Structure probing data (DMS) for a 177-nucleotide construct.
Source: RMDB library OK2TST, as collected in RNAgym.
Conditions: 150 mM KOAc, 10 mM MgCl2 and 150 mM bicine (pH 8.5), 24 C.
[RMDB]
RNA sequence: GGGAACGACUCGAGUAGAGUCGAAAACACAUCGGCUGCGAGCGCGAGCUUGCCAUUUAUGAUGGGCUUGACGUGGAGCUGGUCGAGGAAUUUGAGGCGGCAGGCGUGGUUUGUACCGGGCUUUAUAGUCAUCCACGUAUUUCGAUACGUGGAUGACAAAAGAAACAACAACAACAAC
Reactivity to DMS in 0.01 (KOAc 150mM, MgCl2 10mM, bicine 150mM(pH8.5), 24C), signal-to-noise 1, nucleotides 027 to 126: c080a110c150a090u000c060g030g000c030u010g010c040g050a300g020c000g000c070g010a110g000c030u000u000g020c060c010a060u010u000u010a090u050g000a030u000g000g010g000c010u000u000g010a110c050g030u000g010g020a270g000c040u000g000g010u000c020g010a030g010g010a090a050u010u020u000g010a050g000g010c050g010g030c010a040g010g000c020g000u000g010g010u000u000u010g030u000a070c080c010g000g010g020c110u000u010u010a050u020a100